[RMDB]
RNA sequence: GGGAACGACUCGAGUAGAGUCGAAAAACGGAGGGUUCGCCCUCCGUACCAUAACCUUUGUGUACAGGGGUGUACGGGAGGUCACCCAUUGGGUGAAACCGAGGAUCGUACACCGACUGUACACUCUGGUCCAAGCCUGAGGAUUCGUCCUCAGGAAUAUAUCUUAGAUUUUCGAAUCUAAGAUAUAAAAAGAAACAACAACAACAAC
Reactivity to 2A3 in 0.01 (KOAc 150mM, MgCl2 10mM, bicine 150mM(pH8.5), 24C), signal-to-noise 5, nucleotides 027 to 156: a000c000g000g000a010g040g010g010u100u110c230g150c020c000c000u010c010c000g000u000a000c010c000a110u180a060a040c000c000u010u010u000g000u000g000u000a010c000a010g000g030g010g030u000g010u000a000c010g000g000g010a020g000g000u010c010a010c030c000c100a300u130u300g000g000g000u020g060a250a080a030c000c000g030a180g020g020a010u020c000g000u000a000c000a000c000c000g010a050c000u000g000u000a000c000a000c000u000c000u000g000g010u040c020c070a120a030g030c000c000u010g010a000g010g010a020u040u080c230g070u050c070c000u000c000a000g010g000a000a000
Reactivity to DMS in 0.01 (KOAc 150mM, MgCl2 10mM, bicine 150mM(pH8.5), 24C), signal-to-noise 2, nucleotides 027 to 156: a040c040g010g000a070g010g020g020u000u000c250g010c010c010c010u000c000c000g020u000a010c030c030a170u000a100a050c010c010u010u010u000g020u000g020u010a020c010a030g020g010g020g040u000g020u000a020c030g000g020g000a070g040g010u000c000a010c010c000c000a290u000u000g050g020g000u010g000a090a060a130c020c010g010a110g020g010a090u010c010g000u000a040c010a020c010c030g010a060c020u000g020u000a000c010a000c020u010c040u010g000g000u010c040c110a130a190g020c000c000u020g010a050g030g020a050u000u000c230g000u000c000c000u000c000a010g000g030a030a080